[RMDB]
Description
Structure probing data (DMS and 2A3) for a 177-nucleotide construct. The reactions ran in a buffer of 150 mM KOAc, 10 mM MgCl2 and 150 mM bicine (pH 8.5), at 24 C.
RNA sequence: GGGAACGACUCGAGUAGAGUCGAAAACAUCAUCGGCAAAGGGGACGAGCAGGUGGGCUACUUCGGCGCCAUGUGCGUGCUGGGGCUGAGCGGCGUGGUGCUGCUCUACGUCUGCUUCUUCACGACAGUGAUAUGGCGAUUUCGAUCGCCAUAUCACAAAAGAAACAACAACAACAAC
Reactivity to DMS in 0.01 (KOAc 150mM, MgCl2 10mM, bicine 150mM(pH8.5), 24C), signal-to-noise 2, nucleotides 027 to 126: c120a120u010c070a050u000c050g000g020c060a070a090a130g000g000g010g000a140c090g000a070g020c040a040g010g000u000g000g010g000c060u000a060c030u020u000c070g000g010c020g000c050c000a080u010g010u020g000c040g040u000g020c070u000g000g000g010g010c110u000g000a030g010c030g010g030c010g000u010g020g020u000g010c020u000g000c050u010c010u010a040c110g000u000c090u010g000c020u000u010c090u000u010c060a060c090g020a060c180a070
Reactivity to 2A3 in 0.01 (KOAc 150mM, MgCl2 10mM, bicine 150mM(pH8.5), 24C), signal-to-noise 2, nucleotides 027 to 126: c020a040u120c020a030u060c030g090g030c010a090a110a110g070g010g000g020a010c030g030a040g010c020a010g000g030u030g010g050g010c010u060a080c000u080u060c010g040g000c000g000c050c000a060u110g070u080g080c060g000u040g020c020u070g000g030g010g000c050u050g020a010g000c000g010g020c040g040u160g050g060u230g040c020u010g000c000u000c000u020a000c030g030u020c010u010g020c020u080u020c040u010u070c060a080c090g120a050c030a040